[RMDB]
RNA sequence: GGGAACGACUCGAGUAGAGUCGAAAAAAUGCCGCCUCAGUUCCAAGCUCUUACGUGGCACUGUAAACAGUCCUAUUGAGUUAGGGGCAGUCAACCACGUUGCGAAGCUAAAUUAUCUGGUCGAGAGUUACGAUUCCCUACUUCGGUAGGGAAUCAAGUUUGUUACGAUGUUCGCAUCGUAACAAACAAAAGAAACAACAACAACAAC
Reactivity to 2A3 in 0.01 (KOAc 150mM, MgCl2 10mM, bicine 150mM(pH8.5), 24C), signal-to-noise 3, nucleotides 027 to 156: a000a000u070g040c010c020g010c000c010u030c010a050g010u090u070c010c000a030a000g020c010u010c000u040u050a000c010g000u000g010g010c120a000c000u000g040u070a080a120a060c030a070g140u040c000c010u010a030u060u140g110a200g300u030u030a010g010g000g030g000c010a000g010u020c010a010a040c010c000a010c010g010u030u050g050c130g110a080a020g010c020u070a040a090a080u200u140a060u050c060u030g030g000u060c020g030a010g000a000g190u080u060a040c060g010a000u000u010c000c000c000u000a000c010u010u030c070g060g000u000a000g000g010g000a000a000u000c000a020a000
Reactivity to DMS in 0.01 (KOAc 150mM, MgCl2 10mM, bicine 150mM(pH8.5), 24C), signal-to-noise 2, nucleotides 027 to 156: a060a030u000g020c020c050g020c030c010u000c050a110g010u000u030c030c020a140a300g010c000u000c020u000u000a080c050g040u000g000g000c060a000c020u010g020u000a020a100a090c050a200g000u000c000c000u000a090u000u000g000a260g020u000u000a040g010g020g020g010c020a000g000u000c060a100a030c000c010a040c050g030u000u000g040c100g040a090a080g030c010u000a050a000a070u000u000a090u000c020u000g000g000u000c030g010a100g010a200g000u000u000a120c080g050a060u000u000c000c000c000u000a000c000u000u000c260g080g020u000a020g020g040g000a000a000u000c010a000a140